[RMDB]
RNA sequence: GGGAACGACUCGAGUAGAGUCGAAAAGGUUGUCUCAGAUUUUAAUUUUAUUAGCAGCAUGAGAUUGACUCUUUCAUAAUCUACUUAAGGACCAGUCCAUGAUGUUUGGAAAUGAUAGGAGCCGAUUUUUAGAGGGGAAGCGUGCUGUGGAAGACAAGGCGAUAAUUUAGUUCGCUAAAUUAUCGCCAAAAGAAACAACAACAACAAC
Reactivity to 2A3 in 0.01 (KOAc 150mM, MgCl2 10mM, bicine 150mM(pH8.5), 24C), signal-to-noise 1, nucleotides 027 to 156: g060g000u030u000g000u010c000u040c050a050g030a110u050u070u150u250a070a130u110u080u110u240a210u020u070a020g020c030a000g000c040a030u000g000a000g030a160u030u060g010a020c010u000c000u120u040u000c060a080u050a300a030u010c010u090a110c040u100u100a150a040g030g000a010c010c010a000g040u000c000c000a030u120g000a190u120g130u070u090u030g040g030a000a070a020u110g080a040u100a110g080g000a070g090c050c000g000a020u000u100u000u000u000a000g030a000g020g010g000g000a000a000g020c030g050u000g000c000u000g040u050g090g000a080a000g060a080c040a010a090